[RMDB]
RNA sequence: GGGAACGACUCGAGUAGAGUCGAAAACAUAGCUGGGAUUAGAACCUGGCAGGAAGCUCCAAAGUCCAAGCUCCUGACCAUUGUACCUGAGGCUCUCCCAGGGGGAUGUUGACAGGGACCCUAGGAAACCUGCAUUUAUAUUCGUAUAAAUGCAGGUAAAAGAAACAACAACAACAAC
Reactivity to DMS in 0.01 (KOAc 150mM, MgCl2 10mM, bicine 150mM(pH8.5), 24C), signal-to-noise 5, nucleotides 027 to 126: c060a080u000a130g010c010u010g010g010g010a170u010u010a100g020a120a080c030c080u000g000g010c000a040g000g000a070a080g020c030u000c080c060a080a110a120g010u000c040c050a140a050g010c010u000c010c010u010g010a160c030c010a060u010u000g010u000a090c060c030u000g010a160g010g010c060u010c120u000c020c010c020a080g000g000g010g000g010a050u000g000u010u010g010a110c090a070g010g010g000a090c030c050c020u010a080g010g010a100a120
Reactivity to 2A3 in 0.01 (KOAc 150mM, MgCl2 10mM, bicine 150mM(pH8.5), 24C), signal-to-noise 3, nucleotides 027 to 126: c010a030u170a070g030c020u030g000g000g040a080u140u100a110g020a120a080c010c000u020g000g020c010a000g020g050a140a040g030c010u030c120c090a180a130a030g070u050c040c010a030a010g010c000u000c000c010u100g100a250c000c040a020u050u080g020u050a050c000c000u040g130a050g070g010c010u030c020u020c050c030c010a030g010g030g030g010g000a010u040g050u130u110g050a040c010a000g030g000g060a040c010c010c030u060a030g140g000a200a080